[RMDB]
Description:
Structure probing data (2A3 and DMS) for a 177-nucleotide construct.

RNA sequence: GGGAACGACUCGAGUAGAGUCGAAAAAAUCCAGGUGUUAGGUAAAGGUUUUUGUAAGUUCCAAGCAAAAACACCCGUCUUCAAGCUGCCAUGGAUUGAGCUAUUUUUAAGAAGACACAUGAAAUCAUGUGAGUAUGAUUUUCGAAUCAUACUCACAAAAAGAAACAACAACAACAAC
Reactivity to 2A3 in 0.01 (KOAc 150mM, MgCl2 10mM, bicine 150mM(pH8.5), 24C), signal-to-noise 1, nucleotides 027 to 126: a040a000u030c040c000a020g000g070u040g060u110u180a040g000g030u080a080a140a100g050g000u000u020u020u010u000g040u030a060a090g040u050u040c030c000a020a000g010c010a000a000a000a040a070c010a040c000c030c030g040u010c020u030u000c030a050a050g050c000u060g010c040c000a100u070g040g010a030u050u120g030a000g000c020u130a210u250u270u070u060u080a100a050g030a010a000g060a010c000a020c010a090u120g210a040a090a100u190c090a040
Reactivity to DMS in 0.01 (KOAc 150mM, MgCl2 10mM, bicine 150mM(pH8.5), 24C), signal-to-noise 4, nucleotides 027 to 126: a050a050u000c000c000a050g020g010u000g000u010u000a060g010g010u000a090a100a130g000g020u000u000u000u000u000g020u010a110a110g010u000u000c020c040a100a230g000c030a020a010a020a030a020c020a110c100c080c160g000u000c000u000u010c030a100a110g010c070u000g010c040c020a120u000g000g010a050u000u000g010a080g000c060u000a020u010u010u010u010u010a080a140g000a030a010g000a050c020a120c240a080u010g000a050a050a090u010c130a100
2A3 adducts were read by reverse transcription with SuperScript II with manganese. Conditions: 150 mM KOAc, 10 mM MgCl2 and 150 mM bicine (pH 8.5), 24 C. Source: RMDB library OK2TRN, as collected in RNAgym.